[RMDB]
RNA sequence: GGGAACGACUCGAGUAGAGUCGAAAAUCUGCCGUCGCACGACUUCGCGCAAUACUGGCGCUUCCGCACGCGCCCCGACUUCACGAGCUACAUCACGAAGAUGGACCGCAACGAGGAAUCCGGCGUCGAGACGCCCGUCAUGACGGACCUGUGCGGCGAACUGGUUGAAAUUCGUUUCAACCAGUUCAAAAGAAACAACAACAACAAC
Reactivity to DMS in 0.01 (KOAc 150mM, MgCl2 10mM, bicine 150mM(pH8.5), 24C), signal-to-noise 2, nucleotides 027 to 156: u000c020u000g020c020c060g030u020c020g000c030a050c030g020a080c070u000u000c040g000c010g100c070a060a190u000a080c050u000g040g030c080g010c000u000u000c000c050g020c110a080c030g010c040g030c030c020c030c030g030a120c090u000u000c080a090c020g020a190g000c030u010a100c060a080u000c000a090c020g010a140a230g000a090u000g010g000a050c000c050g020c050a100a130c070g000a090g020g020a060a120u000c020c060g020g000c020g030u000c040g020a090g030a070c030g010c010c010c030g000u000c030a240u000g020a060c030g010g000a040c060c070u000g050u000g020c020g080g050c050
Reactivity to 2A3 in 0.01 (KOAc 150mM, MgCl2 10mM, bicine 150mM(pH8.5), 24C), signal-to-noise 4, nucleotides 027 to 156: u030c040u120g090c020c020g020u030c000g000c010a020c050g050a050c040u040u020c030g010c010g000c090a030a070u060a090c040u060g000g000c010g010c010u070u020c040c030g060c020a030c030g000c000g000c010c010c000c040g070a050c030u050u010c030a020c090g030a030g000c020u070a030c020a040u010c010a020c190g160a120a140g010a020u010g000g040a040c000c100g040c070a080a140c090g050a090g080g030a050a050u050c040c040g000g010c000g010u050c020g020a040g010a060c010g010c010c030c010g010u020c020a020u040g030a010c020g010g010a000c000c020u020g010u010g000c010g000g000c000

Structure probing data (DMS and 2A3) for a 207-nucleotide construct. The 2A3 profile rests on 4,095 reads. The reactions ran in a buffer of 150 mM KOAc, 10 mM MgCl2 and 150 mM bicine (pH 8.5), at 24 C. Values cover nucleotides 27 to 156. The DMS profile rests on 4,066 reads. Source: RMDB library OK3TST, as collected in RNAgym.